[RMDB]
RNA sequence: GGGAACGACUCGAGUAGAGUCGAAAAGACUUGAUGCAGUGUCGUCUGGCAGGUGUCAGGUUGAAGCCGUGGGCUGAGUGGUCAAGUUCAUGCACGAUGUGAACGCGUGACCAGAUGAUCACGCAUGGCGUGUUUCAACGUUCGCGUUGGAAUACGCAAAAGAAACAACAACAACAAC
Reactivity to 2A3 in 0.01 (KOAc 150mM, MgCl2 10mM, bicine 150mM(pH8.5), 24C), signal-to-noise 7, nucleotides 027 to 126: g030a010c000u010u010g000a000u000g000c020a020g020u000g000u000c010g000u010c010u000g000g000c000a010g020g010u010g000u000c000a000g010g010u000u020g030a050a010g030c020c000g020u020g010g010g000c010u010g020a030g090u100g020g040u040c020a020a010g000u000u010c000a000u010g000c030a010c080g050a090u040g030u010g080a080a010c010g010c050g080u010g000a150c000c000a010g020a050u040g000a020u050c010a000c000g020c010a020u060g100
Reactivity to DMS in 0.01 (KOAc 150mM, MgCl2 10mM, bicine 150mM(pH8.5), 24C), signal-to-noise 9, nucleotides 027 to 126: g010a000c000u000u000g000a000u000g000c000a000g000u000g000u000c000g000u000c000u000g000g000c000a040g000g020u000g010u010c010a020g000g010u000u000g000a090a060g020c080c020g050u010g000g000g000c010u000g000a090g030u020g000g010u010c030a070a070g010u000u000c000a010u000g000c080a180c160g010a090u020g010u010g010a060a030c040g010c120g010u010g000a040c010c020a050g000a110u010g000a040u010c010a010c010g020c030a110u020g010